[RMDB]
RNA sequence: GGGAACGACUCGAGUAGAGUCGAAAAGAUAUGGAUUAAAUGGAGAAGCAUAUGGGUGGCGAUGAAACUCGUCGGAAACGACGAGUGGAGCCACACAUAUGCUUCGAUGAAAUUUAAUCCUAAGUCAGAACAAGAAUCAGUUCGCUGAUUCUUGUUCAAAAGAAACAACAACAACAAC
Reactivity to DMS in 0.01 (KOAc 150mM, MgCl2 10mM, bicine 150mM(pH8.5), 24C), signal-to-noise 1, nucleotides 027 to 126: g000a050u000a300u000g020g000a000u000u000a000a000a010u000g000g000a030g010a050a000g000c000a010u000a030u000g000g000g100u000g020g000c010g000a160u030g030a120a170a020c000u000c010g000u000c000g010g000a170a050a180c000g020a000c000g010a010g010u010g020g020a030g010c000c000a010c000a000c020a000u000a000u000g010c020u000u000c000g030a040u000g000a110a150a010u000u000u000a010a000u000c000c000u010a040a170g020u000c040a090
Overview:
Structure probing data (DMS) for a 177-nucleotide construct. For DMS the reverse transcriptase was MarathonRT. The reactions ran in a buffer of 150 mM KOAc, 10 mM MgCl2 and 150 mM bicine (pH 8.5), at 24 C. It was measured as part of the RMDB library TTRINS.